Description: Conditions: 150 mM KOAc, 10 mM MgCl2 and 150 mM bicine (pH 8.5), 24 C. Structure probing data (DMS and 2A3) for a 177-nucleotide construct. For DMS the reverse transcriptase was MarathonRT. The 2A3 profile rests on 1,628 reads.
[RMDB]
RNA sequence: GGGAACGACUCGAGUAGAGUCGAAAACACAGCACGCCGGCGGGCUUCAAGCCCGCGAGGAUCGCGAGAUCGACGGUGCCCUCGGUGUGGCCGCGCCGCGCAAGCACGCCGCCCGGCGCCGCGCGCAAUUUUAGGGACUGUUCGCAGUCCCUAAAAUAAAAGAAACAACAACAACAAC
Reactivity to DMS in 0.01 (KOAc 150mM, MgCl2 10mM, bicine 150mM(pH8.5), 24C), signal-to-noise 4, nucleotides 027 to 126: c080a100c160a120g010c020a040c030g010c010c020g000g020c010g000g010g010c010u000u000c270a140a190g030c000c000c000g030c010g010a030g000g000a030u000c030g010c230g000a200g000a030u000c020g000a090c020g000g010u000g010c020c010c050u010c040g010g030u000g030u010g010g000c040c050g010c040g020c070c100g020c070g020c080a120a150g010c030a070c040g010c030c060g010c050c040c070g000g000c010g000c020c090g010c030g020c050g010c070a100
Reactivity to 2A3 in 0.01 (KOAc 150mM, MgCl2 10mM, bicine 150mM(pH8.5), 24C), signal-to-noise 1, nucleotides 027 to 126: c040a000c000a020g090c040a020c030g020c010c040g020g020c040g000g030g040c000u300u300c070a030a040g000c050c000c000g020c010g010a020g020g010a010u030c020g020c060g040a040g010a070u080c040g120a110c040g030g060u040g030c010c020c000u040c020g040g000u060g010u060g070g070c040c010g030c030g070c060c040g010c020g000c050a060a020g110c010a020c040g010c030c000g020c040c050c040g020g020c020g000c000c000g000c040g000c000g000c020a030
For DMS, 3,602 sequencing reads were counted.